Chemical mapping of a 177-nucleotide RNA with 2A3.
2A3 adducts were read by reverse transcription with SuperScript II with manganese.
The reactions ran in a buffer of 150 mM KOAc, 10 mM MgCl2 and 150 mM bicine (pH 8.5), at 24 C.
[RMDB]
RNA sequence: GGGAACGACUCGAGUAGAGUCGAAAACGCAACCGCCACACCCGUUUCGGGGACCUCGGUACAGGCAGGCUGAGAACUCCCCUCUUUUAUGCCCGGCGGUAGCGCAGCGAUCCGCGCCUCCGCCCUCGCGGUGAUUUUCUUUCGAGAAAAUCACCGCAAAAGAAACAACAACAACAAC
Reactivity to 2A3 in 0.01 (KOAc 150mM, MgCl2 10mM, bicine 150mM(pH8.5), 24C), signal-to-noise 1, nucleotides 027 to 126: c040g060c000a010a030c050c010g000c030c000a030c010a040c050c010c000g010u080u150u200c150g000g000g000g000a010c000c030u020c000g050g020u100a160c040a000g090g000c010a010g000g030c010u010g020a010g020a090a050c040u010c000c000c030c000u030c030u000u090u020u060a070u140g040c010c020c010g000g000c000g000g000u000a010g000c020g000c030a030g010c020g090a080u070c050c060g000c000g010c000c000u020c000c020g000c000c010c000u070c010